[RMDB]
RNA sequence: GGGAACGACUCGAGUAGAGUCGAAAAUAUUUCGCGCCAUUGUAGCUCAGUGCUAGUGCGCUUCACUCGUAUAAAAAUACUGCCAUGAAGAGGUCCGCGGUUCAAUCCCGCGUGGUGGCAAAAAAAACACUCUAACUUAUUUCGAUAAGUUAGAGUGAAAAGAAACAACAACAACAAC
Reactivity to DMS in 0.01 (KOAc 150mM, MgCl2 10mM, bicine 150mM(pH8.5), 24C), signal-to-noise 5, nucleotides 027 to 126: u010a100u010u010u010c090g010c090g020c010c060a080u010u010g030u000a040g020c020u000c170a100g020u010g020c020u010a060g020u000g030c040g000c030u000u010c070a080c050u000c070g040u000a070u010a030a060a090a080a110u000a060c110u000g010c070c040a060u000g000a060a060g000a050g000g000u010c040c010g010c000g000g000u000u000c190a160a190u010c300c000c000g000c000g020u010g010g010u000g000g010c010a000a000a000a030a030a040a060a080
Reactivity to 2A3 in 0.01 (KOAc 150mM, MgCl2 10mM, bicine 150mM(pH8.5), 24C), signal-to-noise 3, nucleotides 027 to 126: u130a030u040u170u130c030g000c010g020c030c010a060u060u210g110u080a020g020c020u030c220a140g030u060g160c010u030a020g050u030g120c000g000c000u060u070c040a060c020u050c040g070u120a100u110a240a200a020a020a010u070a080c070u040g010c020c000a010u040g030a050a050g040a040g080g000u010c010c010g000c010g000g000u010u080c020a040a040u060c020c000c000g010c000g000u020g000g010u010g000g000c000a040a010a020a010a020a020a050a010